[RMDB]
RNA sequence: GGGAACGACUCGAGUAGAGUCGAAAAAGAUCCACGCUACGGCGUGGAUCACACGUUCAUCCCUAUUGGGACGGAAGUAGACAUAGUGCCGAAGGAACGCAUUAGUCAUGCGCUACGGCGCAUGACACACAUCAGAGUCACUUCGGUGACUCUGAAACCAUGCGACUAACUUCGGUUAGUCGCAUGGAAAAGAAACAACAACAACAAC
Reactivity to 2A3 in 0.01 (KOAc 150mM, MgCl2 10mM, bicine 150mM(pH8.5), 24C), signal-to-noise 2, nucleotides 027 to 156: a000g020a000u000c000c000a000c000g000c000u030a060c260g170g000c000g000u000g010g000a000u000c000a000c000a000c000g090u130u120c020a040u020c020c000c000u220a240u060u300g000g000g000a010c040g030g030a090a000g080u090a050g020a020c140a150u150a030g010u040g040c000c000g130a150a090g140g000a090a050c020g030c060a050u070u280a020g000u000c000a000u000g010c000g050c000u070a080c300g040g040c000g020c000a000u000g010a020c030a000c010a000c000a160u020c000a000g000a000g000u000c000a000c030u060u110c200g020g010u010g000a000c000u000c000u000g000a000a000a000